The data come from the RNA Mapping Database (RMDB), library OK3TST.
This 207-nucleotide RNA was probed chemically with 2A3.
The 2A3 profile rests on 616 reads.

RNA sequence: GGGAACGACUCGAGUAGAGUCGAAAACAUUGUGCACAAGGACAUCAAGCCGGGGAACCUGCUGCUCACCACCGGUGGCACCCUCAAAAUCUCCGACCUGGGCGUGGCCGAGGUAGGCACGUGCUAGGGGGGGCCCUGGGGCGCCCCCUCCCGGGCAGUAUUAGUAGUGAUUCGUCACUACUAAUACAAAAGAAACAACAACAACAAC
Reactivity to 2A3 in 0.01 (KOAc 150mM, MgCl2 10mM, bicine 150mM(pH8.5), 24C), signal-to-noise 1, nucleotides 027 to 156: c070a020u010u130g010u060g060c040a030c020a130a020g030g000a030c020a110u080c040a070a000g000c020c000g000g000g030g030a030a050c010c010u030g030c030u040g020c030u080c110a070c060c020a080c030c050g040g000u010g000g000c020a060c010c000c000u100c100a060a140a050a130u030c060u040c040c000g170a210c000c020u020g000g020g000c020g020u050g010g100c030c030g040a110g160g010u130a100g010g030c000a000c000g060u090g040c030u090a060g020g000g000g010g000g000g000c040c010c050u140g040g020g140g020c010g040c010c020c090c000c000u000c020c000c000g030g020g040c020a020